[RMDB]
RNA sequence: GGGAACGACUCGAGUAGAGUCGAAAAGGAUUGCUUUGACUUUGAUGAAAAGAAAUUUGCACUUAAUCUUGCCUCUGGGACAGGAACCAUUCAAGAUUGUGUUACCUGUGAUGAUAUUGAUGCAAUGAUAUCGAGUACGGUUCGCCGUACUCGAUAUAAAAGAAACAACAACAACAAC
Reactivity to DMS in 0.01 (KOAc 150mM, MgCl2 10mM, bicine 150mM(pH8.5), 24C), signal-to-noise 2, nucleotides 027 to 126: g020g000a090u000u000g030c020u000u000u000g020a300c050u000u000u020g010a140u000g010a150a020a050a070g000a030a140a080u000u000u000g000c020a040c140u000u000a100a040u000c020u000u000g010c060c040u000c060u010g000g010g000a040c040a040g000g010a050a040c040c030a050u000u010c180a060a160g000a070u010u000g000u000g010u000u000a080c010c010u010g030u000g010a090u020g010a090u010a090u000u010g000a080u000g020c070a020a040u000g000
Reactivity to 2A3 in 0.01 (KOAc 150mM, MgCl2 10mM, bicine 150mM(pH8.5), 24C), signal-to-noise 2, nucleotides 027 to 126: g040g010a160u110u120g010c020u070u070u060g030a090c040u010u000u050g100a140u120g030a060a060a000a000g050a080a220a040u020u030u070g020c040a040c030u080u020a090a040u050c030u060u000g050c080c000u000c050u110g050g020g050a020c000a050g000g000a040a000c010c000a000u100u090c120a120a080g080a300u050u140g020u020g000u100u120a300c000c010u000g020u010g050a060u070g000a010u020a070u150u190g040a030u040g000c020a050a070u170g020

The record gives the reactivity of an RNA of 177 nucleotides to DMS and 2A3.
The DMS profile rests on 1,839 reads.
For DMS the reverse transcriptase was MarathonRT.